Record summary
An RNA of 177 nucleotides, treated with 2A3 and DMS and read out base by base. 2A3 is a SHAPE reagent: it acylates the 2'-hydroxyl of flexible nucleotides of all four kinds. The 2A3 profile rests on 7,586 reads. The data come from the RNA Mapping Database (RMDB), library OK2TST. For DMS the reverse transcriptase was MarathonRT. Conditions: 150 mM KOAc, 10 mM MgCl2 and 150 mM bicine (pH 8.5), 24 C.
RNA sequence: GGGAACGACUCGAGUAGAGUCGAAAACUGUGUGCAGGCUGCUCCAGGAAUACGUGCCUUGUCCAAGGUCAGGGAUGGGUAGUUGCUGCUGUGCUUCAAGCUGAAAUUGACCACAGGCAACCACAGCCCCUGGCUGUGUAUUCGUACACAGCCAGGGAAAAGAAACAACAACAACAAC
Reactivity to 2A3 in 0.01 (KOAc 150mM, MgCl2 10mM, bicine 150mM(pH8.5), 24C), signal-to-noise 5, nucleotides 027 to 126: c030u030g010u010g020u070g120c050a030g070g020c040u020g010c010u050c030c020a020g040g140a120a080u180a110c100g040u130g030c000c000u010u070g070u010c080c050a050a030g060g020u060c060a030g040g020g070a050u070g030g000g030u040a040g010u040u070g020c020u040g000c020u020g020u020g020c020u040u080c040a050a050g010c040u090g110a120a170a130u080u050g020a030c000c030a010c000a030g010g000c010a010a020c020c020a040c010a040g060c000
Reactivity to DMS in 0.01 (KOAc 150mM, MgCl2 10mM, bicine 150mM(pH8.5), 24C), signal-to-noise 6, nucleotides 027 to 126: c040u010g000u010g020u000g020c080a070g000g020c040u000g020c050u000c030c060a080g020g010a100a100u010a060c140g020u000g010c020c030u000u010g020u010c100c070a080a070g000g000u010c050a070g000g000g000a090u010g000g000g000u000a040g010u000u000g020c030u000g010c050u020g000u010g000c120u010u020c030a040a050g020c100u010g000a060a070a150u000u010g010a030c300c020a060c050a040g000g010c030a020a080c050c030a060c060a120g000c120